[RMDB]
RNA sequence: GGGAACGACUCGAGUAGAGUCGAAAACCCACCCGUCAUCGGGGAGUAGCCGCCCUGCAUCCGUUGCAGGGGCUCGCGUCAACACACUUGGCCUGCAGGCCAUGGUGCGAGCAGCUUCCACAGCCUGCGGCCUUCCUAGGUUCGCCUAGGAAGGCCGAAAAGAAACAACAACAACAAC
Reactivity to 2A3 in 0.01 (KOAc 150mM, MgCl2 10mM, bicine 150mM(pH8.5), 24C), signal-to-noise 3, nucleotides 027 to 126: c010c010c010a030c000c000c020g160u180c060a150u230c050g030g010g030g010a010g020u000a050g000c050c050g070c020c010c000u010g000c010a030u080c090c200g200u150u030g000c010a020g030g010g000g000c000u000c000g000c010g020u030c060a150a140c030a010c020a030c210u060u100g020g000c000c020u200g050c140a170g000g000c000c000a010u020g000g000u020g010c010g000a040g000c040a000g010c000u150u040c020c020a030c020a020g040c000c000u040g020
Reactivity to DMS in 0.01 (KOAc 150mM, MgCl2 10mM, bicine 150mM(pH8.5), 24C), signal-to-noise 1, nucleotides 027 to 126: c000c030c000a220c000c010c000g020u010c250a250u030c040g070g020g000g000a040g000u000a130g000c140c100g000c040c000c000u000g000c000a000u020c300c010g000u080u020g000c060a000g000g000g000g000c000u000c050g010c050g000u050c040a100a060c220a120c200a120c060u040u000g000g000c030c000u020g030c300a200g000g000c000c020a000u000g000g010u000g000c000g010a070g000c050a150g000c010u030u000c000c010a020c300a110g030c000c010u000g020
Source: RMDB library RFM100, as collected in RNAgym. Structure probing data (2A3 and DMS) for a 177-nucleotide construct. DMS adducts were read by reverse transcription with MarathonRT. The DMS profile rests on 885 reads.